[RMDB]
RNA sequence: GGGAACGACUCGAGUAGAGUCGAAAAACUUGCUGGGUCAUAUGUAACUCUGUGUUGAACAUUUUGAGGAACUACCAAAAUAUUUUCCAAAGCAGCUGCACCUUUUUCCCAUCAGCAGUGUGGGAGGUUUCAGUUUCUCCACAUCCUUGCCAGCACCGUAGAUACGUAUAUUCGUAUACGUAUCUACAAAAGAAACAACAACAACAAC
Reactivity to 2A3 in 0.01 (KOAc 150mM, MgCl2 10mM, bicine 150mM(pH8.5), 24C), signal-to-noise 7, nucleotides 027 to 156: a000c040u070u100g010c020u030g010g010g040u120c050a080u110a070u260g070u110a090a070c030u040c080u110g060u020g060u090u120g080a120a050c050a130u110u130u070u130g030a040g020g000a040a050c030u050a060c070c030a040a000a080a100u140a100u060u150u080u030c050c000a050a070a070g040c030a040g010c030u020g000c010a080c010c000u100u140u040u140u060c020c000c000a020u040c020a020g080c020a030g010u020g010u040g080g040g020a050g040g000u020u100u110c030a030g010u010u040u020c030u010c020c010a030c000a040u050c000c030u060u070g040c020c000a010g020c030a040c060c050
Reactivity to DMS in 0.01 (KOAc 150mM, MgCl2 10mM, bicine 150mM(pH8.5), 24C), signal-to-noise 2, nucleotides 027 to 156: a050c050u010u000g020c020u010g020g020g010u000c040a080u010a060u030g010u000a050a090c040u000c030u010g020u000g030u000u000g010a050a080c030a090u000u000u000u000g010a100g010g010a100a080c070u000a170c040c020a030a040a100a080u000a050u000u000u000u000c060c020a040a090a100g010c030a060g000c060u010g000c040a030c030c040u000u000u000u000u000c010c000c000a150u000c090a080g040c070a070g000u000g020u000g010g030g010a070g020g010u010u010u000c040a050g010u000u000u000c000u000c010c040a040c020a100u000c040c020u000u010g040c000c020a110g010c020a060c140c060

Conditions: 150 mM KOAc, 10 mM MgCl2 and 150 mM bicine (pH 8.5), 24 C. An RNA of 207 nucleotides, treated with 2A3 and DMS and read out base by base. The DMS profile rests on 7,119 reads. As a SHAPE reagent, 2A3 marks flexible, mostly unpaired nucleotides at the ribose 2'-OH. The data come from the RNA Mapping Database (RMDB), library OK3TST.